The data come from the RNA Mapping Database (RMDB), library OK2TRN. The record gives the reactivity of an RNA of 177 nucleotides to 2A3 and DMS.
[RMDB]
RNA sequence: GGGAACGACUCGAGUAGAGUCGAAAAAAGUAGGGUGGUAUGUGUCUGAAAGUGGAAGGUUUAGGAACAGAGAUCUAGUGGUGGAUCACGCUACAAGUGUCCACUUGACGACUCUCCACCGACAUGAGUACCCUGGGUAGUUCGCUACCCAGGGUACAAAAGAAACAACAACAACAAC
Reactivity to 2A3 in 0.01 (KOAc 150mM, MgCl2 10mM, bicine 150mM(pH8.5), 24C), signal-to-noise 2, nucleotides 027 to 126: a000a000g180u110a000g080g000g040u020g000g000u040a040u260g090u060g030u000c010u000g030a000a000a030g000u000g010g030a010a010g120g030u080u070u280a040g020g060a120a030c030a060g060a010g020a070u030c030u050a080g130u050g300g110u090g000g040a050u060c050a030c110g040c050u120a050c030a110a000g090u050g030u250c000c000a000c000u000u020g060a000c000g000a010c000u000c000u010c010c000a000c040c020g020a000c010a060u110g000a030
Reactivity to DMS in 0.01 (KOAc 150mM, MgCl2 10mM, bicine 150mM(pH8.5), 24C), signal-to-noise 2, nucleotides 027 to 126: a020a090g010u000a080g010g000g040u000g010g010u000a040u000g030u000g000u000c060u000g000a160a020a010g000u010g000g010a080a070g000g000u010u000u000a050g020g000a080a090c140a180g030a180g000a040u000c020u000a140g040u040g020g040u010g000g000a040u000c010a060c060g040c050u000a040c100a070a150g000u000g000u010c010c000a010c010u000u000g030a300c300g000a020c000u000c030u000c000c020a030c000c060g000a060c060a070u000g000a230
The RNA was probed in 150 mM KOAc, 10 mM MgCl2 and 150 mM bicine (pH 8.5) at 24 C. The 2A3 profile rests on 1,320 reads. DMS (dimethyl sulfate) methylates the pairing face of unpaired adenines and cytosines.